[RMDB]
RNA sequence: GGGAACGACUCGAGUAGAGUCGAAAAUCCACCAAAUACAUUGAGUUGGAAAAACCUGAACAUGCCGAUGGUGGCUUCAACGAACAGGAUUUUGCUAAUAAGGUGGCGGAUAGUGUAAAUCAUAAUGGAUCCUGGUAUGGUUCGCCAUACCAGGAUCAAAAGAAACAACAACAACAAC
Reactivity to 2A3 in 0.01 (KOAc 150mM, MgCl2 10mM, bicine 150mM(pH8.5), 24C), signal-to-noise 1, nucleotides 027 to 126: u040c010c020a010c000c070a080a130a000u260a030c040a010u040u120g070a090g020u060u000g000g000a050a070a060a000a030c000c000u020g010a040a010c070a110u130g050c140c010g000a030u040g070g240u080g000g030c000u000u070c010a040a050c070g030a030a000c010a040g000g130a030u000u020u050u140g030c080u070a010a030u050a260a060g050g000u010g030g000c050g000g030a010u010a120g220u140g010u070a080a100a010u210c030a060u180a260a060u140g140
Reactivity to DMS in 0.01 (KOAc 150mM, MgCl2 10mM, bicine 150mM(pH8.5), 24C), signal-to-noise 2, nucleotides 027 to 126: u000c010c010a050c090c020a060a100a110u000a070c180a040u020u000g020a250g010u000u000g000g000a030a020a180a140a060c000c040u010g030a120a060c110a090u010g000c090c050g020a090u010g020g030u000g000g010c130u000u000c110a040a100c120g000a110a140c150a060g000g010a050u010u000u020u010g000c070u010a020a070u000a040a150g000g000u000g000g000c030g000g020a020u010a030g040u000g010u000a030a040a090u020c070a080u010a070a120u000g000

Chemical mapping of a 177-nucleotide RNA with 2A3 and DMS. Values cover nucleotides 27 to 126. For DMS the reverse transcriptase was MarathonRT. For 2A3, 618 sequencing reads were counted.